This 177-nucleotide RNA was probed chemically with DMS and 2A3. It was measured as part of the RMDB library OK2TST. For DMS the reverse transcriptase was MarathonRT. The DMS profile rests on 7,657 reads. The RNA was probed in 150 mM KOAc, 10 mM MgCl2 and 150 mM bicine (pH 8.5) at 24 C.

RNA sequence: GGGAACGACUCGAGUAGAGUCGAAAACGGGCGAGGUCCCGCGCCUUGUCGGUGUGCAGACCUACACUCGCUUUGCGUUGACAGCCACGCACUCAGGAGGGAUGGGAUGCGAUUCCUGCACACUGCCUACCCCUCUAUCAUUCGUGAUAGAGGGGUAAAAAGAAACAACAACAACAAC
Reactivity to DMS in 0.01 (KOAc 150mM, MgCl2 10mM, bicine 150mM(pH8.5), 24C), signal-to-noise 6, nucleotides 027 to 126: c090g010g010g020c020g020a050g000g020u000c010c040c020g010c020g000c010c020u010u010g020u000c040g020g020u000g000u010g000c030a020g010a140c080c040u000a140c100a140c060u000c010g020c040u000u000u010g020c010g020u010u010g030a180c190a110g010c110c080a050c020g010c010a050c150u000c090a110g000g000a050g000g000g010a220u000g000g000g000a120u010g010c090g000a120u000u000c140c000u010g000c010a020c010a030c000u000g010c070c070
Reactivity to 2A3 in 0.01 (KOAc 150mM, MgCl2 10mM, bicine 150mM(pH8.5), 24C), signal-to-noise 4, nucleotides 027 to 126: c020g030g020g000c040g010a060g030g150u080c020c020c000g000c010g010c010c000u010u190g130u070c020g000g020u000g010u010g040c020a010g010a130c020c010u060a060c070a030c050u010c010g060c060u040u060u090g000c010g020u020u090g090a110c080a050g130c070c010a020c010g000c010a010c010u080c050a060g000g150a030g050g100g040a100u070g020g030g020a030u090g090c060g070a060u110u100c020c000u000g000c000a000c000a000c010u010g000c000c010